[RMDB]
RNA sequence: GGGAACGACUCGAGUAGAGUCGAAAAGCCCCCUCGCUUCCAUAGAAAGGGGACGGGGCAGAUCGCAAGUGCUACAACCGAGCGGUGGUAUCUGUCAAACUAAGCAGCCACUGCACAUCAAUUGACUAAACGAUGCCGAUCUUCGGAUCGGCAUCAAUCAUCAAUCAUUCUUCGGAAUGAUUGAUGAAAAAGAAACAACAACAACAAC
Reactivity to DMS in 0.01 (KOAc 150mM, MgCl2 10mM, bicine 150mM(pH8.5), 24C), signal-to-noise 1, nucleotides 027 to 156: g030c010c000c020c010c000u000c000g010c010u010u010c050c040a230u000a170g000a080a160a110g000g000g040g020a020c010g050g020g000g040c020a040g010a030u000c030g030c050a100a090g000u000g040c000u000a100c030a100a210c090c060g000a140g000c000g050g000u010g000g020u000a040u020c030u010g000u000c040a110a060a210c120u000a060a060g010c030a100g020c010c010a030c010u000g000c000a080c090a080u000c050a040a110u000u020g000a200c100u010a060a130a060c080g010a010u000g010c020c000g040a030u010c020u000u000c290g040g000a010u000c000g020g050c000a000u010c000a020a100
Reactivity to 2A3 in 0.01 (KOAc 150mM, MgCl2 10mM, bicine 150mM(pH8.5), 24C), signal-to-noise 1, nucleotides 027 to 156: g020c000c000c000c000c030u000c000g010c090u030u050c020c040a120u060a220g230a130a080a000g010g000g010g020a020c020g000g000g020g040c010a000g000a040u060c050g000c050a070a040g030u030g120c030u150a130c070a060a140c130c080g080a060g070c010g000g010u000g000g000u070a050u040c000u030g030u050c010a080a110a140c110u130a130a000g000c000a000g030c000c000a000c000u000g100c030a010c080a070u200c100a190a260u130u240g130a090c060u170a140a070a050c080g010a000u000g000c000c000g000a000u020c000u030u040c150g090g030a000u000c000g020g010c000a000u000c000a000a000